RNA sequence: GGGAACGACUCGAGUAGAGUCGAAAAAUUUUCUGUGCCAGUUAUAUCCGACAACUGUCCCGAUUUAUGUCGAAAGGGACAAUGAUGCAUAUUCUGGAGAGAUGUUACCGGAUUAUUUAGCACCCAAUACCCAUAAAAUGUUCGCAUUUUAUGGGUAAAAAGAAACAACAACAACAAC
Reactivity to 2A3 in 0.01 (KOAc 150mM, MgCl2 10mM, bicine 150mM(pH8.5), 24C), signal-to-noise 5, nucleotides 027 to 126: a000u030u030u010u010c010u020g060u060g070c000c000a000g040u050u040a060u010a010u080c030c010g080a050c060a120a040c070u020g000u010c010c000c010g000a010u030u140u120a260u300g220u170c110g030a040a040a040g000g000g000a010c000a000a010u080g020a060u080g000c010a000u000a020u060u020c020u020g030g010a080g010a000g010a080u090g080u190u080a050c030c030g000g000a010u010u030a020u050u110u060a030g020c020a080c010c010c000a000a040
Reactivity to DMS in 0.01 (KOAc 150mM, MgCl2 10mM, bicine 150mM(pH8.5), 24C), signal-to-noise 7, nucleotides 027 to 126: a050u000u000u000u010c010u000g020u010g010c020c030a040g020u010u000a030u000a030u000c100c030g030a200c080a070a090c100u000g010u000c000c000c000g010a250u010u000u000a080u020g020u020c170g010a030a060a300g000g000g010a020c030a010a050u000g000a130u010g000c150a050u000a020u000u000c020u000g000g010a130g000a120g010a070u000g010u000u000a150c140c030g010g000a040u010u000a040u000u000u000a120g010c110a160c010c030c030a080a180